[RMDB]
RNA sequence: GGGAACGACUCGAGUAGAGUCGAAAAAGGAGAGCUGCCUCUUCUUGUUCUCCAGGGCCUUCCUUCUUCGGUGGUCCCGCCUCUCCUGUUCGGUGAACCCUCCCGGGUGUUUCCUCUUCCUAGGUCCAUGGACCGUGCUUCGGCACGGUCAAAAGAAACAACAACAACAAC
Reactivity to 2A3 in 0.01 (KOAc 150mM, MgCl2 10mM, bicine 150mM(pH8.5), 24C), signal-to-noise 5, nucleotides 027 to 129: a000g020g000a000g000a000g020c220u130g070c070c020u020c000u030u010c020u020u060g000u020u010c040u020c010c010a070g020g010g000c000c000u080u120c070c000u080u130c040u100u090c060g040g000u040g020g010u030c050c010c000g010c000c010u020c000u000c000c000u020g030u040u090c060g010g030u020g050a070a050c010c000c000u020c000c020c020g000g000g000u020g020u000u040u010c010c000u030c000u030u030c020c000u020a030g060g000u000c030c000a090u080g050
Reactivity to DMS in 0.01 (KOAc 150mM, MgCl2 10mM, bicine 150mM(pH8.5), 24C), signal-to-noise 4, nucleotides 027 to 129: a040g000g000a030g020a000g000c150u070g040c180c030u000c020u010u040c040u010u050g000u000u040c040u030c020c130a180g070g020g080c030c030u040u030c060c030u000u000c050u010u060c130g000g000u000g020g050u030c020c040c060g010c000c030u010c000u020c040c040u010g030u000u000c040g000g070u020g020a110a110c090c030c020u000c060c040c000g020g020g030u030g000u070u060u010c050c050u020c050u020u010c020c040u030a060g020g000u030c000c000a130u000g020